RNA sequence: GGGAACGACUCGAGUAGAGUCGAAAAGGCACCAAGCAUGAGGCAACAACUGCAGUACUUGUGGGGAAGGCACAAGUAGGACACCAACAUUACCUGCAAGCAAGACGCAAAAUUAAUAGAACAUCACGUGUAGUUACUAGUUCGCUAGUAACUACACAAAAGAAACAACAACAACAAC
Reactivity to 2A3 in 0.01 (KOAc 150mM, MgCl2 10mM, bicine 150mM(pH8.5), 24C), signal-to-noise 4, nucleotides 027 to 126: g040g000c010a010c040c020a040a020g030c000a050u080g040a040g040g040c040a030a010c010a040a010c100u070g000c030a020g020u020a010c010u040u030g010u040g010g030g000g040a040a040g060g000c030a000c000a020a000g020u010a030g010g070a020c000a010c040c010a020a030c010a030u040u070a040c000c010u010g040c030a030a020g000c020a070a040g050a050c040g000c100a050a060a040a040u180u140a080a100u080a100g110a100a030c030a080u090c060a000c180
Reactivity to DMS in 0.01 (KOAc 150mM, MgCl2 10mM, bicine 150mM(pH8.5), 24C), signal-to-noise 3, nucleotides 027 to 126: g010g000c090a100c020c030a080a110g000c030a060u010g000a090g000g000c060a040a080c070a060a170c100u000g010c040a060g000u000a050c030u000u000g030u000g020g010g010g020a070a060g010g010c030a010c030a010a020g000u010a060g000g000a140c090a070c050c030a040a060c060a080u000u000a100c040c020u000g000c060a080a050g010c060a040a070g000a060c060g010c070a060a040a040a050u000u010a050a100u000a090g020a090a070c160a060u020c160a070c190

Structure probing data (2A3 and DMS) for a 177-nucleotide construct. 2A3 adducts were read by reverse transcription with SuperScript II with manganese. For DMS, 2,764 sequencing reads were counted. The 2A3 profile rests on 5,851 reads. Values are in units of 0.01, from 0 to 300, in steps of 10.